Structure probing data (2A3 and DMS) for a 177-nucleotide construct. Conditions: 150 mM KOAc, 10 mM MgCl2 and 150 mM bicine (pH 8.5), 24 C.
RNA sequence: GGGAACGACUCGAGUAGAGUCGAAAAGACGGAAACUGUGCCCCGUCAUCACGGUCAUAUCCUGAAGAUGGCAGUUACCGCCCUCUUCACAGACCGGACAGUCGUGCGGGUGGUUAGUCAUCAGCCACGGGGUCCAUAAUUUCGAUUAUGGACCCCGAAAAGAAACAACAACAACAAC
Reactivity to 2A3 in 0.01 (KOAc 150mM, MgCl2 10mM, bicine 150mM(pH8.5), 24C), signal-to-noise 3, nucleotides 027 to 126: g030a000c020g020g040a060a090a130c130u150g040u110g090c000c010c010c000g040u020c020a100u120c040a000c020g000g000u000c000a070u060a130u300c040c030u080g010a010a020g000a010u000g010g000c020a030g080u160u200a120c060c030g000c000c000c010u010c000u000u030c020a010c030a000g010a000c000c000g000g010a040c060a030g120u120c050g090u110g070c020g010g030g020u010g000g030u060u060a080g050u030c010a020u010c030a090g060c000c000a070
Reactivity to DMS in 0.01 (KOAc 150mM, MgCl2 10mM, bicine 150mM(pH8.5), 24C), signal-to-noise 2, nucleotides 027 to 126: g000a030c070g000g070a100a000a040c120u000g000u000g010c110c030c000c050g000u000c030a190u100c110a110c000g000g000u000c050a170u010a040u030c250c150u000g000a000a000g010a000u000g030g030c000a130g130u030u010a070c300c140g010c000c000c060u000c000u000u070c030a010c200a140g000a050c010c000g000g000a070c150a000g000u000c070g010u000g020c000g000g000g010u000g050g030u050u010a050g010u000c000a010u000c160a140g000c040c120a110

About this RNA: For DMS, 1,443 sequencing reads were counted. 2A3 is a SHAPE reagent: it acylates the 2'-hydroxyl of flexible nucleotides of all four kinds.